[RMDB]
Description:
Chemical mapping of a 177-nucleotide RNA with DMS and 2A3. The RNA was probed in 150 mM KOAc, 10 mM MgCl2 and 150 mM bicine (pH 8.5) at 24 C. It was measured as part of the RMDB libraries RFM100 and RFMREP. For DMS the reverse transcriptase was MarathonRT.
RNA sequence: GGGAACGACUCGAGUAGAGUCGAAAACGAAGCGCGCGUAUUCCAAAUUUGUUUAAAAAACGAGCAGGGGCAACUGGACUGAAUGCAAUAGUGAUCAAUACUUCAACUGUCGGCGGGACAUCUCCCCCUACAGGUAAUAUUUCGAUAUUACCUGUAGAAAAGAAACAACAACAACAAC
Reactivity to DMS in 0.01 (KOAc 150mM, MgCl2 10mM, bicine 150mM(pH8.5), 24C), signal-to-noise 9, nucleotides 027 to 126: c060g010a110a110g010c030g010c030g010c030g020u000a100u010u010c030c030a080a110a150u010u010u010g010u010u000u010a010a050a090a060a070a060c060g010a060g010c060a060g000g000g000g010c030a040a060c060u010g000g000a060c050u010g010a060a050u010g010c070a050a050u020a050g020u010g000a060u020c090a060a070u010a070c070u010u010c070a050a070c080u010g020u000c040g010g010c050g010g000g000a040c070a050u010c060u000c010c000c000c110
Reactivity to 2A3 in 0.01 (KOAc 150mM, MgCl2 10mM, bicine 150mM(pH8.5), 24C), signal-to-noise 9, nucleotides 027 to 126: c020g040a060a010g020c020g000c010g000c010g040u050a120u060u070c030c010a050a060a080u100u080u060g080u030u100u130a110a140a020a010a010a010c040g010a020g010c020a020g020g000g010g000c010a050a030c040u030g020g050a030c020u050g060a090a050u090g010c040a040a100u050a110g060u060g050a050u080c040a060a050u070a160c030u080u080c030a100a040c030u040g030u060c010g020g020c010g010g010g010a010c010a060u030c050u030c010c000c000c010